[RMDB]
An RNA of 177 nucleotides, treated with DMS and 2A3 and read out base by base. It was measured as part of the RMDB library M2PK50. Conditions: 150 mM KOAc, 10 mM MgCl2 and 150 mM bicine (pH 8.5), 24 C.
RNA sequence: GGGAACGACUCGAGUAGAGUCGAAAAGCCGAAGAGUUCGCUCUUCGGCGACGAAUUUGGCGUAGAUGAGAGUCUACAGUACUAGCCAUCCCAGAUGUAGAAAUAAGCAUUGCUUCGGCAAUGCUAAUGAUCGGUGUAAGUUCGCUUACACCGAUCAAAAAGAAACAACAACAACAAC
Reactivity to DMS in 0.01 (KOAc 150mM, MgCl2 10mM, bicine 150mM(pH8.5), 24C), signal-to-noise 2, nucleotides 027 to 126: g000c000c000g010a010a010g000a020g000u000u000c190g070c000u000c000u000u000c000g000g000c010g000a060c130g010a150a150u000u000u000g000g020c020g000u010a020g020a000u000g010a250g030a250g000u000c000u000a010c000a130g010u000a040c170u020a230g010c010c010a130u010c000c000c010a180g000a090u000g020u000a090g010a090a070a060u010a080a030g000c000a020u000u000g020c000u000u040c190g020g000c000a000a000u020g000c000u000a020a060
Reactivity to 2A3 in 0.01 (KOAc 150mM, MgCl2 10mM, bicine 150mM(pH8.5), 24C), signal-to-noise 1, nucleotides 027 to 126: g010c010c010g030a000a000g040a020g060u100u130c220g000c050u030c020u000u010c000g000g070c000g000a020c020g070a010a130u130u130u200g010g000c070g020u000a000g010a030u040g060a020g000a030g120u000c000u000a000c000a020g020u010a080c090u100a040g000c010c000a030u030c010c000c000a060g000a160u210g020u180a050g130a120a080a110u220a110a010g000c010a000u010u000g000c000u000u030c150g000g000c010a010a000u000g030c010u000a010a020